Structure probing data (DMS and 2A3) for a 207-nucleotide construct.
RNA sequence: GGGAACGACUCGAGUAGAGUCGAAAAGGCGUCAUUAAGAUAGCCACUGCUGUUUACCUUCGUCAUUGGGGUGAACGGGACUCUUAGAUGACUGGGCCCGGAUCAGCUACUUGUUUGCAGGAUAGCUGGGGCCGAGAAAAUCCGACGCAAACUGCGCCUAUAGGCGUUAGUUCGCUAACGCCUAUAGAAAAGAAACAACAACAACAAC
Reactivity to DMS in 0.01 (KOAc 150mM, MgCl2 10mM, bicine 150mM(pH8.5), 24C), signal-to-noise 2, nucleotides 027 to 156: g000g000c050g020u000c000a120u000u010a090a120g000a090u010a050g040c010c000a090c110u010g020c000u010g000u000u010u010a030c010c000u010u010c100g030u000c150a120u000u000g020g000g020g020u000g030a020a040c010g030g010g010a080c020u010c040u000u000a070g060a040u000g000a060c020u010g030g040g030c000c010c000g030g010a090u000c010a050g000c000u000a020c030u000u000g030u000u000u000g040c060a220g010g000a090u000a040g000c000u000g010g020g010g040c000c040g010a070g010a070a040a100a300u000c020c000g020a160c060g010c010a060a050a110c070u000g010c040g010c060
Reactivity to 2A3 in 0.01 (KOAc 150mM, MgCl2 10mM, bicine 150mM(pH8.5), 24C), signal-to-noise 3, nucleotides 027 to 156: g010g010c010g060u020c040a080u180u300a110a080g010a040u080a120g020c020c010a020c040u100g010c000u000g000u000u010u010a010c000c000u020u060c090g010u000c010a030u030u030g000g000g000g010u000g010a000a000c000g020g000g020a080c010u080c060u180u220a050g000a030u000g000a010c000u010g000g000g000c000c000c000g000g000a050u040c000a000g000c000u000a000c010u080u190g020u020u030u030g010c010a010g020g010a050u010a000g010c000u000g000g010g000g000c000c000g000a000g000a010a020a000a010u000c020c010g050a050c080g070c010a010a020a040c040u110g030c050g020c030
The RNA was probed in 150 mM KOAc, 10 mM MgCl2 and 150 mM bicine (pH 8.5) at 24 C. The 2A3 profile rests on 3,348 reads. DMS (dimethyl sulfate) methylates the pairing face of unpaired adenines and cytosines. It was measured as part of the RMDB library RSTRND. For DMS, 3,206 sequencing reads were counted.